This 207-nucleotide RNA was probed chemically with DMS and 2A3.

RNA sequence: GGGAACGACUCGAGUAGAGUCGAAAAGCGUACUACUCGAAUUUGGUGUGGGAGAUUCAGGGCACUCUUCUCCCAAAUAGGAGAAGUUGCCAGCUGAAUCGAAGAACACACUUUGUUCGAGUAUCGCAAAAUAGUCACCACUUCGGUGGUGACUAAAUCUUUAGAUAGACUUCGGUCUAUCUAAAGAAAAAGAAACAACAACAACAAC
Reactivity to DMS in 0.01 (KOAc 150mM, MgCl2 10mM, bicine 150mM(pH8.5), 24C), signal-to-noise 1, nucleotides 027 to 156: g020c030g030u000a070c050u000a020c010u010c000g010a010a020u000u010u000g060g020u000g000u000g020g010g010a270g000a030u000u010c000a030g040g000g040c030a010c140u000c000u010u000c000u000c000c010c020a030a130a110u030a020g010g000a020g000a020a020g030u000u000g010c000c000a080g000c000u000g010a040a020u000c010g020a100a170g030a150a170c000a020c000a020c040u010u010u010g020u000u000c010g000a100g010u010a050u010c010g010c020a060a050a080a150u000a050g010u000c000a000c000c000a000c000u000u000c300g040g020u000g030g030u000g000a000c000u000a000a030a050
Reactivity to 2A3 in 0.01 (KOAc 150mM, MgCl2 10mM, bicine 150mM(pH8.5), 24C), signal-to-noise 2, nucleotides 027 to 156: g000c000g050u080a090c040u000a000c000u050c000g010a020a020u000u030u070g000g000u010g000u000g000g010g000a050g010a010u010u000c010a030g010g000g010c030a040c100u160c020u030u000c000u020c000c060c030a180a230a100u260a040g000g010a010g000a000a010g010u010u010g000c000c010a100g100c040u010g000a000a000u000c010g000a050a000g010a000a000c000a000c000a000c000u020u000u010g000u000u000c000g000a000g000u000a000u000c000g000c000a050a070a000a040u040a000g000u000c000a000c000c000a000c000u050u070c300g090g000u000g000g000u000g000a000c000u000a000a000a000